RNA sequence: GGGAACGACUCGAGUAGAGUCGAAAAAUUACGGGCGGCGCAGGUGGACCUGCGAUCCCUCCGCCCAUCGCGUGCUCUCUCGGUGGCCCAGACGCUGCAAACGGACAGGCGGGCCACCUGCAACGAACCUACAAGAUUUGUUCGCAAAUCUUGUAGGAAAAGAAACAACAACAACAAC
Reactivity to 2A3 in 0.01 (KOAc 150mM, MgCl2 10mM, bicine 150mM(pH8.5), 24C), signal-to-noise 4, nucleotides 027 to 126: a010u180u120a080c070g000g000g000c000g050g010c020g000c020a010g000g040u220g180g180a240c000c000u000g000c010g010a010u020c000c000c000u010c000c000g000c000c010c000a030u080c020g030c030g010u020g020c010u030c000u010c020u060c200g000g000u000g000g000c000c010c000a080g060a100c140g020c110u030g000c040a130a290a170c070g060g080a080c010a030g020g020c010g000g000g000c010c000a000c000c000u010g000c000a030a020c000g050a010a070
Reactivity to DMS in 0.01 (KOAc 150mM, MgCl2 10mM, bicine 150mM(pH8.5), 24C), signal-to-noise 3, nucleotides 027 to 126: a100u000u010a080c130g010g010g010c030g010g010c130g020c020a010g010g010u010g030g020a150c010c010u000g000c000g010a100u000c010c010c000u010c010c000g000c010c010c000a100u000c070g010c050g020u000g010c030u000c130u010c120u000c130g000g020u000g000g010c010c010c020a100g000a090c090g020c010u000g010c110a070a120a140c300g010g000a150c020a030g000g010c050g000g000g000c000c010a010c010c010u000g010c090a090a050c070g010a080a130
Source: RMDB library M2PK90, as collected in RNAgym. The record gives the reactivity of an RNA of 177 nucleotides to 2A3 and DMS. 2A3 is a SHAPE reagent: it acylates the 2'-hydroxyl of flexible nucleotides of all four kinds. For DMS the reverse transcriptase was MarathonRT. 2A3 adducts were read by reverse transcription with SuperScript II with manganese.